Structure probing data (2A3) for a 177-nucleotide construct. It was measured as part of the RMDB library OK1LIB. For 2A3, 640 sequencing reads were counted.

RNA sequence: GGGAACGACUCGAGUAGAGUCGAAAAGCUCGGAGACGAGCAAGGCUGACAAAACGCUGUCCCUACCUCCACGUGGUGUCGGCUGGAUAAUGCUGCAUUAUGUUGCAUUUAUCAACUGGGAAGUAAAGGCACGUGGCUAGUUCGCUAGCCACGUGCCAAAAGAAACAACAACAACAAC
Reactivity to 2A3 in 0.01 (KOAc 150mM, MgCl2 10mM, bicine 150mM(pH8.5), 24C), signal-to-noise 1, nucleotides 027 to 126: g000c000u000c000g000g050a010g000a040c020g000a000g000c000a000a000g040g020c010u010g000a030c080a050a140a000a000c050g090c070u020g050u060c000c020c000u000a000c000c030u060c000c000a020c020g100u120g000g020u010g000u000c000g040g030c090u090g000g000a010u000a030a000u010g010c010u030g000c010a040u070u070a250u300g030u010u000g000c000a010u000u060u080a040u070c000a000a030c070u090g000g000g000a070a000g070u070a010a140a120